Chemical mapping of a 177-nucleotide RNA with DMS and 2A3. For DMS, 1,197 sequencing reads were counted.
[RMDB]
RNA sequence: GGGAACGACUCGAGUAGAGUCGAAAAGCCGACUGCACGUGCGUGCGAGCAGUUUUCGAAAUCGCACGUUUCACGAAAAGACCCAACUCUACUCGAUGCGAGGGUCAGCAAGCAAGCAGCAAUAAAACGUCCAAGUACAAUUCGUUGUACUUGGACGAAAAGAAACAACAACAACAAC
Reactivity to DMS in 0.01 (KOAc 150mM, MgCl2 10mM, bicine 150mM(pH8.5), 24C), signal-to-noise 2, nucleotides 027 to 126: g050c090c070g000a080c050u010g000c090a180c020g070u010g020c020g000u010g000c000g000a010g000c140a190g020u000u000u000u010c140g000a110a140a140u000c020g000c010a030c010g000u010u000u000c030a060c030g050a070a030a110a120g010a030c010c040c000a130a070c000u000c000u000a010c000u000c000g000a020u010g000c040g000a090g000g000g010u010c020a100g000c060a060a030g020c100a040a050g020c040a040g000c090a060a070u000a060a010a110a080
Reactivity to 2A3 in 0.01 (KOAc 150mM, MgCl2 10mM, bicine 150mM(pH8.5), 24C), signal-to-noise 1, nucleotides 027 to 126: g090c020c030g090a080c030u020g010c040a020c080g030u020g030c000g000u030g000c020g010a090g020c090a060g000u030u040u140u210c060g080a080a050a090u010c000g000c010a000c010g000u030u090u060c020a010c010g040a000a090a000a060g040a030c000c000c030a030a010c010u020c010u050a040c000u000c020g030a040u070g010c030g010a070g030g000g000u010c010a000g020c020a010a010g030c020a000a050g000c010a000g000c000a070a100u120a170a100a030a010